[RMDB]
RNA sequence: GGGAACGACUCGAGUAGAGUCGAAAACACGUGAAGUCCCAGGGGCAUAAGGACAAAGCCAAGGAGCUGAAGUCGCUUGAGAAAGAAAUUGCUGGCCAAGAUGAGGACCACUUCAUUACAGUGGACGACCCGGAAGCUAUUUCGAUAGCUUCCGGGUAAAAGAAACAACAACAACAAC
Reactivity to DMS in 0.01 (KOAc 150mM, MgCl2 10mM, bicine 150mM(pH8.5), 24C), signal-to-noise 2, nucleotides 027 to 126: c100a110c130g060u050g020a150a080g000u000c020c000c020a030g000g020g000g040c100a030u080a040a050g010g010a060c050a060a090a150g040c070c000a100a050g000g000a090g010c000u000g000a120a210g010u000c030g020c030u010u010g000a050g000a090a060a050g000a060a130a070u010u060g010c030u030g000g000c000c030a190a030g000a150u000g000a080g000g040a080c010c030a100c000u030u040c130a110u020u000a010c240a030g000u000g010g000a120c100g010
Reactivity to 2A3 in 0.01 (KOAc 150mM, MgCl2 10mM, bicine 150mM(pH8.5), 24C), signal-to-noise 1, nucleotides 027 to 126: c040a000c020g060u100g070a110a010g030u010c000c000c000a010g030g020g000g000c060a030u040a170a040g000g000a000c000a000a100a000g010c030c020a180a130g140g100a100g010c000u060g000a280a000g020u000c020g050c010u080u070g080a080g040a070a100a000g030a020a190a000u000u090g000c000u000g050g000c000c020a030a070g000a120u190g000a110g110g000a000c000c000a010c000u070u060c000a040u030u130a090c010a060g000u000g160g000a000c000g000
An RNA of 177 nucleotides, treated with DMS and 2A3 and read out base by base.
The DMS profile rests on 1,341 reads.
Values cover nucleotides 27 to 126.
The reactions ran in a buffer of 150 mM KOAc, 10 mM MgCl2 and 150 mM bicine (pH 8.5), at 24 C.
For 2A3, 494 sequencing reads were counted.